Chemical mapping of a 177-nucleotide RNA with DMS and 2A3.
[RMDB]
RNA sequence: GGGAACGACUCGAGUAGAGUCGAAAAUCAAAGCCACCUGCUCAUUACACCUAUUGUGUUUGCUAUCUUGAGGAUGGACCAGAUUGUUCUACAACAGACAAGGUGGCACAAUCAACUAUCCGCUGGGCUUCGAAUGAAAUUUCGAUUUCAUUCGAAGAAAAGAAACAACAACAACAAC
Reactivity to DMS in 0.01 (KOAc 150mM, MgCl2 10mM, bicine 150mM(pH8.5), 24C), signal-to-noise 7, nucleotides 027 to 126: u010c080a080a130a130g000c010c020a040c040c020u000g010c080u000c070a090u000u000a070c080a060c040c200u000a100u010u010g020u000g020u000u000u000g000c070u000a090u000c060u010u000g010a110g000g010a030u000g000g010a060c120c120a140g000a050u000u000g000u000u000c030u000a050c050a070a120c180a090g000a100c220a080a090g010g030u000g000g010c040a010c040a020a040u000c050a070a090c060u000a060u000c020c010g020c090u000g010g020g000
Reactivity to 2A3 in 0.01 (KOAc 150mM, MgCl2 10mM, bicine 150mM(pH8.5), 24C), signal-to-noise 5, nucleotides 027 to 126: u070c010a040a010a030g040c000c010a030c000c030u040g020c010u030c040a070u070u150a040c020a030c010c060u190a160u210u220g040u000g030u050u060u060g050c010u050a120u170c030u030u100g030a030g030g020a020u030g020g040a120c040c040a030g010a140u030u050g010u010u020c010u050a060c020a180a010c010a070g180a040c040a100a050g080g000u000g010g050c010a000c000a000a010u050c000a010a050c010u030a030u030c000c020g020c060u060g070g010g000
The data come from the RNA Mapping Database (RMDB), library OK2TRN. The 2A3 profile rests on 6,659 reads.